[RMDB]
RNA sequence: GGGAACGACUCGAGUAGAGUCGAAAAAAGGACUGGUUCGCCAGUCCUUAUUCAUUCGUACGCAUCGAAGCGUAAGUCAUUACGCAAAUGACUAAAAGCGUAUACGAAAGGACUUCGGUCCUUUCAACACUGUCUGGUAGUUCGCUACCAGACAGUGAAAAGAAACAACAACAACAAC
Reactivity to 2A3 in 0.01 (KOAc 150mM, MgCl2 10mM, bicine 150mM(pH8.5), 24C), signal-to-noise 2, nucleotides 027 to 126: a010a000g000g000a010c010u000g000g030u020u030c090g030c080c000a000g000u000c000c000u000u000a000u000u010c000a010u030u040c030g050u020a000c010g030c010a050u080c110g130a120a050g000c000g000u010a020a020g120u090c080a140u050u060a000c010g000c050a080a060a070u120g020a030c050u110a130a030a000a000g010c010g000u030a010u020a080c120g000a000a000a000g010g000a000c010u040u070c230g030g010u010c000c030u000u010u000c000a020a000
Reactivity to DMS in 0.01 (KOAc 150mM, MgCl2 10mM, bicine 150mM(pH8.5), 24C), signal-to-noise 3, nucleotides 027 to 126: a030a010g000g000a020c000u010g000g000u010u010c230g040c000c010a020g000u000c000c000u010u010a000u000u000c090a180u010u010c090g020u010a010c010g030c000a160u010c110g000a110a120g000c010g020u000a030a020g010u000c280a080u010u000a010c070g000c070a030a060a070u010g000a050c290u000a080a030a040a090g010c020g020u000a020u010a070c250g010a010a020a000g010g020a020c000u000u020c130g030g010u010c000c000u010u000u010c000a140a190

Notes:
An RNA of 177 nucleotides, treated with 2A3 and DMS and read out base by base. For DMS the reverse transcriptase was MarathonRT. Conditions: 150 mM KOAc, 10 mM MgCl2 and 150 mM bicine (pH 8.5), 24 C. Reactivities are given for positions 27 through 126.